[RMDB]
RNA sequence: GGGAACGACUCGAGUAGAGUCGAAAAGAUAUGGAAAUUCGCUUUGAUCAUGUGGAUCGGAAACGAUCCCAUGGGAGCGAAAUUCCUAAGUCAAAGACAAGAUUGAUCUUCGGAUCAAUCUUGUCAAUCUAACUAUAAGGUUCGCCUUAUAGUUAGAAAAAGAAACAACAACAACAAC
Reactivity to 2A3 in 0.01 (KOAc 150mM, MgCl2 10mM, bicine 150mM(pH8.5), 24C), signal-to-noise 7, nucleotides 027 to 126: g010a010u050a020u100g010g000a000a010a030u010u000c010g010c050u180u170u250g200a210u300c010a010u010g230u300g040g000a000u000c000g010g000a030a050a020c000g000a000u000c000c030c000a000u010g010g050g000a000g000c000g000a000a000a000u000u000c000c000u020a070a020g040u020c060a180a080a010g000a000c010a000a010g000a000u000u010g000a000u010c020u050u170c300g050g000a000u000c000a000a000u010c010u000u000g000u000c010a000a000
Reactivity to DMS in 0.01 (KOAc 150mM, MgCl2 10mM, bicine 150mM(pH8.5), 24C), signal-to-noise 5, nucleotides 027 to 126: g000a030u000a210u010g000g000a000a020a060u000u000c000g010c010u000u000u010g010a140u010c010a000u000g000u010g040g000a010u000c000g010g000a060a050a110c000g000a010u000c010c000c000a000u000g000g010g000a010g010c000g010a000a010a040u000u000c000c000u010a030a110g000u000c030a090a140a130g000a010c000a010a010g000a010u000u000g000a010u010c000u000u010c220g020g000a000u000c000a000a000u000c000u000u000g010u000c000a020a060